This 177-nucleotide RNA was probed chemically with DMS. DMS adducts were read by reverse transcription with MarathonRT. Source: RMDB library OK2TST, as collected in RNAgym.
RNA sequence: GGGAACGACUCGAGUAGAGUCGAAAAUUUUUCCAGAGCCAUCUUGCUGUCCUCAUAUAUUUAUUCUCCUAGAUGAAUUGUUGCUUAAGCAACAAUGAAGUUUAAAUUGUUCUUCAGAUAGAACCCCAAGACUACUAGACUUCGGUCUAGUAGUCUUAAAAGAAACAACAACAACAAC
Reactivity to DMS in 0.01 (KOAc 150mM, MgCl2 10mM, bicine 150mM(pH8.5), 24C), signal-to-noise 1, nucleotides 027 to 126: u000u000u000u000u000c040c000a150g020a110g000c150c030a050u000c030u010u010g030c190u000g010u000c040c020u010c060a030u030a070u020a060u010u010u010a030u020u000c010u000c040c070u030a100g010a070u000g000a160a040u000u000g000u000u000g010c000u000u020a150a300g010c000a010a020c010a010a000u000g010a140a130g010u000u000u000a030a080a160u000u000g000u000u000c010u000u000c080a140g040a160u010a060g020a070a080c030c070c010c050